An RNA of 207 nucleotides, treated with 2A3 and read out base by base. For 2A3 the reverse transcriptase was SuperScript II with manganese.

RNA sequence: GGGAACGACUCGAGUAGAGUCGAAAAAGACGGAAACCCAUCUACUGUCACCAGAUGCUGCAUCACCUGAUCACUGAUGGCUCAACGGUAUCCGGCGGUACAACUGAAUACUUGUAGCUGCCUUUUGAAAAGGAGUUCAUCUUCGGAUGAACUCCAACCAAUGGUUUGCGUUCGCGCAAACCAUUGGAAAAGAAACAACAACAACAAC
Reactivity to 2A3 in 0.01 (KOAc 150mM, MgCl2 10mM, bicine 150mM(pH8.5), 24C), signal-to-noise 2, nucleotides 027 to 156: a000g050a010c060g030g020a050a040a050c070c000c000a020u040c040u020a060c000u040g040u050c000a010c080c000a030g000a070u060g010c060u060g030c020a080u060c010a050c000c030u060g030a060u030c050a000c080u030g020a030u040g050g010c020u030c080a010a100c040g000g040u070a060u060c070c050g020g000c000g010g000u000a010c000a030a010c070u140g080a140a100u120a150c080u010u030g010u030a030g100c010u010g010c000c000u130u140u040u110g130a070a060a020a030g000g000a010g000u000u000c000a000u020c010u030u050c130g100g000a000u000g000a000a000c000u000c000c000a000a000

Reactivities are given for positions 27 through 156.
The reactions ran in a buffer of 150 mM KOAc, 10 mM MgCl2 and 150 mM bicine (pH 8.5), at 24 C.